Source information
Chemical mapping of a 207-nucleotide RNA with 2A3. The reactions ran in a buffer of 150 mM KOAc, 10 mM MgCl2 and 150 mM bicine (pH 8.5), at 24 C. It was measured as part of the RMDB library OK3TST.
RNA sequence: GGGAACGACUCGAGUAGAGUCGAAAACGCGAUGGAUACGUCCAUCGCGAAUCCGUCCAAGCCGCGGACGUUAAACUGUGGCACGGUUGUGCCUAGGUGCAACCCUGCUUUCGAUGGCGGCACCCCUGCCCAAGCUACCGUCUACGGACGGUAGCAACACUGCGCUAGCAUUCGUGCUAGCGCAGUGAAAAGAAACAACAACAACAAC
Reactivity to 2A3 in 0.01 (KOAc 150mM, MgCl2 10mM, bicine 150mM(pH8.5), 24C), signal-to-noise 1, nucleotides 027 to 156: c000g030c000g010a000u000g000g000a020u030a050c180g120u000c000c000a000u000c000g010c000g010a000a000u030c000c000g000u020c000c000a080a010g000c000c000g000c000g050g000a000c010g000u010u000a010a030a060c090u170g050u120g030g000c000a000c000g000g020u000u010g000u010g030c000c050u040a160g040g030u000g000c000a000a000c020c010c000u010g020c010u140u220u150c060g070a100u150g080g000c020g000g000c020a110c020c050c000c020u060g040c000c020c020a050a000g000c000u010a000c000c000g020u000c000u030a060c280g080g000a000c000g000g000u000a000g000c010a000a010